This 177-nucleotide RNA was probed chemically with DMS. The RNA was probed in 150 mM KOAc, 10 mM MgCl2 and 150 mM bicine (pH 8.5) at 24 C. For DMS, 537 sequencing reads were counted. It was measured as part of the RMDB library OK2TRN.
RNA sequence: GGGAACGACUCGAGUAGAGUCGAAAAACUUAUGACGUUGAAAGAGAGCGGCUUUCGACUGUUGGCGAUGACCCCACACGGCAACGCGUGCAAACUACCGGAGGCCAUCGCCGCGGUGUCGCACGAAUCGGUUGGGCAUAUUCGUAUGCCCAACCGAAAAAGAAACAACAACAACAAC
Reactivity to DMS in 0.01 (KOAc 150mM, MgCl2 10mM, bicine 150mM(pH8.5), 24C), signal-to-noise 1, nucleotides 027 to 126: a040c020u000u010a090u010g000a040c060g030u000u000g050a030a030a150g000a140g020a150g030c110g000g000c000u000u060u000c070g010a020c020u020g000u000u000g000g000c000g040a030u010g000a040c070c000c000c000a120c020a280c060g000g000c160a050a060c300g050c080g020u010g000c150a090a160a120c090u000a070c120c080g080g000a060g020g000c010c040a000u010c040g020c010c000g010c030g000g000u000g000u000c130g000c090a060c040g000a080a100